[RMDB]
RNA sequence: GGGAACGACUCGAGUAGAGUCGAAAAAGCACGCUGGCCAUGCCCCCUUUCUGGACACAGAUCCAGAAAUGUGCCUUCUGCUCACUUCCACCCUUGCCAGAAUCCUGUGGGCGCACAGCCACCUGUGGCUUAGCAGGGUGUUCGCACCCUGCUAAGCAAAAGAAACAACAACAACAAC
Reactivity to DMS in 0.01 (KOAc 150mM, MgCl2 10mM, bicine 150mM(pH8.5), 24C), signal-to-noise 2, nucleotides 027 to 126: a100g000c020a060c170g000c020u000g000g020c030c040a100u010g000c010c020c010c010c030u000u000u000c000u000g010g010a040c040a210c240a130g000a130u020c010c000a000g010a000a020a030u010g030u010g030c020c020u000u000c030u000g040c010u000c060a080c110u000u000c050c040a140c040c040c030u010u000g020c040c050a070g010a080a100u000c020c030u000g020u000g000g000g000c070g010c080a020c040a050g000c050c010a100c080c020u000g020u000g060
Structure probing data (DMS) for a 177-nucleotide construct. High DMS reactivity at an A or C suggests that its Watson-Crick edge is free. The RNA was probed in 150 mM KOAc, 10 mM MgCl2 and 150 mM bicine (pH 8.5) at 24 C. DMS adducts were read by reverse transcription with MarathonRT.